RNA sequence: GGGAACGACUCGAGUAGAGUCGAAAAGAUAUGGAGCGUUGUUGAGCGUGGGCUCGGAAACGAGCCGACGCAAUGAUGCACCGCUCCUAAGUCAAAACGUUGCGAAAACUUCGGUUUUCGCAACGAACUGUCAAGAUUACUUCGGUAAUCUUGACAGAAAAGAAACAACAACAACAAC
Reactivity to DMS in 0.01 (KOAc 150mM, MgCl2 10mM, bicine 150mM(pH8.5), 24C), signal-to-noise 2, nucleotides 027 to 126: g000a010u010a030u020g000g010a000g020c000g010u000u000g000u010u000g000a090g030c010g060u000g000g000g000c000u000c000g030g000a010a000a040c010g010a000g000c010c000g000a020c010g030c000a130a080u010g010a240u000g000c000a020c080c000g000c000u000c000c000u000a000a060g000u010c020a070a060a080a160c020g020u000u000g010c000g000a020a000a000a000c000u000u010c170g030g010u000u000u000u000c000g020c020a000a000c000g000a050a050
Reactivity to 2A3 in 0.01 (KOAc 150mM, MgCl2 10mM, bicine 150mM(pH8.5), 24C), signal-to-noise 1, nucleotides 027 to 126: g010a000u030a000u060g020g000a010g020c000g010u010u000g020u030u080g120a040g010c010g010u060g090g010g000c010u000c000g000g000a030a010a000c010g000a000g020c030c010g000a000c010g000c000a050a120u150g010a000u010g000c000a000c020c000g010c010u010c000c000u000a000a000g000u010c010a000a010a130a180c010g000u000u010g000c010g000a000a000a000a000c020u060u120c300g080g000u000u000u000u000c000g010c010a000a000c000g000a010a000
Overview
An RNA of 177 nucleotides, treated with DMS and 2A3 and read out base by base. For 2A3 the reverse transcriptase was SuperScript II with manganese. The data come from the RNA Mapping Database (RMDB), library TTRDEL. The 2A3 profile rests on 7,132 reads. For DMS the reverse transcriptase was MarathonRT.